[RMDB]
This 177-nucleotide RNA was probed chemically with DMS and 2A3. It was measured as part of the RMDB library OK1LIB.

RNA sequence: GGGAACGACUCGAGUAGAGUCGAAAAAUAGCCUAACGUAGUGUUCUCUUAGUGGACCUUCUGGGUGUCUCUUAAAUCUGUGGCACGGGAACACUGUAGAGGGUUUCCUACUUACUUGCGAGUCCACUACGGCGUACAAUUUCGAUUGUACGCCGUAAAAAGAAACAACAACAACAAC
Reactivity to DMS in 0.01 (KOAc 150mM, MgCl2 10mM, bicine 150mM(pH8.5), 24C), signal-to-noise 2, nucleotides 027 to 126: a080u030a070g020c010c000u000a090a190c190g000u000a050g020u020g010u000u000c000u000c000u000u000a050g020u030g020g000a010c000c010u000u000c060u020g030g040g000u000g000u000c040u000c000u000u030a050a100a120u050c300u030g030u000g010g000c000a030c090g020g080g020a040a000c020a040c000u000g000u000a040g010a140g000g000g000u000u000u010c000c020u000a050c110u050u000a120c140u050u000g000c120g010a100g010u000c010c030a070c040
Reactivity to 2A3 in 0.01 (KOAc 150mM, MgCl2 10mM, bicine 150mM(pH8.5), 24C), signal-to-noise 2, nucleotides 027 to 126: a000u180a020g080c030c000u040a110a020c020g040u020a000g000u020g020u060u000c030u000c010u070u050a030g000u070g030g010a030c040c000u180u010c130u190g140g010g040u010g000u020c000u000c000u040u140a090a140a050u070c150u150g120u110g000g000c000a000c000g000g000g000a010a020c050a010c030u000g020u010a110g020a080g000g000g000u000u010u000c000c000u040a080c000u070u100a050c000u000u030g040c000g070a050g030u010c000c020a000c000
DMS adducts were read by reverse transcription with MarathonRT.
The DMS profile rests on 2,289 reads.
Conditions: 150 mM KOAc, 10 mM MgCl2 and 150 mM bicine (pH 8.5), 24 C.